[RMDB]
RNA sequence: GGGAACGACUCGAGUAGAGUCGAAAAAAUGAGAGAACUGCACAUACUACUGUUCAUGUUGAGACAAAGGACAAUUGUGCGGAUAGCUAGAGAGCUCAACAUAAGUGUGGCUACGGCACCCUCAUUCAACACUUACUCUGUUCGCAGAGUAAGUGUUAAAAGAAACAACAACAACAAC
Reactivity to 2A3 in 0.01 (KOAc 150mM, MgCl2 10mM, bicine 150mM(pH8.5), 24C), signal-to-noise 5, nucleotides 027 to 126: a000a000u070g000a040g000a010g020a100a040c020u030g010c040a020c000a060u130a040c020u040a020c060u050g060u090u060c040a040u080g070u040u070g110a160g020a050c050a070a150a090g070g010a020c030a070a160u110u050g030u030g030c000g020g020a130u140a050g000c010u140a080g030a020g020a010g200c030u030c130a020a080c020a070u180a120a140g090u080g030u070g160g000c010u050a040c040g000g010c000a020c020c010c020u010c000a010u030u080c010
Reactivity to DMS in 0.01 (KOAc 150mM, MgCl2 10mM, bicine 150mM(pH8.5), 24C), signal-to-noise 5, nucleotides 027 to 126: a050a020u000g000a040g020a100g010a150a160c070u000g000c040a050c040a050u000a090c140u010a070c170u000g000u000u010c100a120u000g010u000u010g000a100g010a070c080a070a120a120g000g020a070c110a070a110u010u000g010u000g020c030g010g010a120u010a080g010c020u010a090g020a170g020a080g000c000u000c020a020a030c030a060u000a100a060g010u000g030u000g000g020c050u000a070c050g010g020c040a240c080c020c010u000c020a040u000u000c070